[RMDB]
RNA sequence: GGGAACGACUCGAGUAGAGUCGAAAACAUCUUUCCUCCCUACACAGUGACUCCAGCUUGGGAGGGGCAGGGCUAGGCUGAGCCAGCACUCCCUGUGGUGUCUGCCUGCCACGUGCAGCUCUGGAGCAAAACCUGGAGAAGUUCGCUUCUCCAGGAAGCACGUAGCUUAGUUCGCUAAGCUACGUGCAAAAGAAACAACAACAACAAC
Reactivity to 2A3 in 0.01 (KOAc 150mM, MgCl2 10mM, bicine 150mM(pH8.5), 24C), signal-to-noise 2, nucleotides 027 to 156: c010a070u070c070u150u190u070c000c010u050c010c000c000u150a200c190a080c080a120g070u030g060a080c000u000c000c000a000g010c020u010u060g000g000g000a000g020g010g000g020c030a020g000g000g000c020u190a000g000g000c000u030g010a000g190c080c030a030g000c000a020c050u060c020c020c010u010g000u060g000g020u010g180u020c000u010g000c010c020u040g020c050c020a230c070g250u150g030c000a010g000c010u080c040u070g000g010a000g000c000a000a000a000a080c000c000u000g000g000a010g010a000a000g010u040u130c210g000c140u000u020c000u020c010c000a000g010g000a000a000
Structure probing data (2A3) for a 207-nucleotide construct. Values are in units of 0.01, from 0 to 300, in steps of 10.